Chemical mapping of a 177-nucleotide RNA with DMS. It was measured as part of the RMDB library RFM100. For DMS, 1,608 sequencing reads were counted. The RNA was probed in 150 mM KOAc, 10 mM MgCl2 and 150 mM bicine (pH 8.5) at 24 C. Reactivities are given for positions 27 through 126.
RNA sequence: GGGAACGACUCGAGUAGAGUCGAAAACAAAAUUUCAAGGUAACAAAAAGAGGUGCAAAUGUAUAUAUUACUAAACUAGAGAAGCCUCCUCCUGAAGGUUCUGGUAGUUGAUUGAUAAGUACGAACGCAACACCCAGUUUUUCGAAACUGGGUGUUGAAAAGAAACAACAACAACAAC
Reactivity to DMS in 0.01 (KOAc 150mM, MgCl2 10mM, bicine 150mM(pH8.5), 24C), signal-to-noise 1, nucleotides 027 to 126: c080a050a020a050a110u060u040u030c040a000a100g000g000u030a110a120c130a030a120a050a130a110g010a030g000g040u000g000c020a030a070a020u010g000u000a020u020a060u010a050u030u010a030c080u000a020a010a090c050u020a070g000a170g000a090a110g020c000c000u010c030c040u000c000c050u000g000a040a010g000g000u000u000c010u050g000g010u000a120g010u000u010g000a050u000u000g010a000u010a070a050g000u010a030c040g000a050a060c300g000